Background
This 207-nucleotide RNA was probed chemically with 2A3 and DMS. High DMS reactivity at an A or C suggests that its Watson-Crick edge is free. For DMS, 1,654 sequencing reads were counted. The RNA was probed in 150 mM KOAc, 10 mM MgCl2 and 150 mM bicine (pH 8.5) at 24 C. 2A3 adducts were read by reverse transcription with SuperScript II with manganese. DMS adducts were read by reverse transcription with MarathonRT.
RNA sequence: GGGAACGACUCGAGUAGAGUCGAAAAGUGCCGGCAAUGCAGUGUGUAUGGAGGUCUCAAUGGCUCGGAAGUGCCAGCAAACCGGCGUAGAUAUUAGCAGACGUAUGGGCGUAAGACUUUUAUUGAAAAAAGUACAUAAGCUUCGGCUUAUGUACAACAUAUACGUCGACUUCGGUCGACGUAUAUGAAAAGAAACAACAACAACAAC
Reactivity to 2A3 in 0.01 (KOAc 150mM, MgCl2 10mM, bicine 150mM(pH8.5), 24C), signal-to-noise 2, nucleotides 027 to 156: g120u050g000c030c010g030g000c070a090a060u080g000c020a050g060u040g040u030g020u160a060u020g070g030a040g060g040u000c030u000c060a110a200u130g040g000c100u090c110g010g060a070a020g010u020g040c010c000a010g020c020a030a030a080c010c000g000g000c000g000u030a000g000a030u070a010u130u050a050g010c010a000g030a050c000g140u140a050u130g110g110g030c040g020u030a070a000g040a010c000u060u060u040u120a140u070u170g020a060a070a040a040a000a000g000u000a000c000a000u000a000a000g000c000u060u090c280g080g000c000u040u000a000u010g000u000a000c000a000a000
Reactivity to DMS in 0.01 (KOAc 150mM, MgCl2 10mM, bicine 150mM(pH8.5), 24C), signal-to-noise 1, nucleotides 027 to 156: g060u010g080c000c030g010g000c040a040a070u000g050c000a230g020u020g010u000g040u000a040u000g000g010a130g040g020u000c050u040c060a110a120u000g020g050c060u010c050g010g010a170a150g050u010g010c020c000a070g000c070a040a130a060c020c020g000g000c060g010u020a090g020a110u000a050u000u000a080g010c020a210g000a070c000g010u010a060u000g000g020g020c010g000u020a110a130g000a060c040u000u030u000u040a090u000u000g000a040a140a140a020a070a250g040u000a020c010a000u000a000a020g000c000u000u010c300g040g000c000u000u010a000u000g020u000a010c010a060a040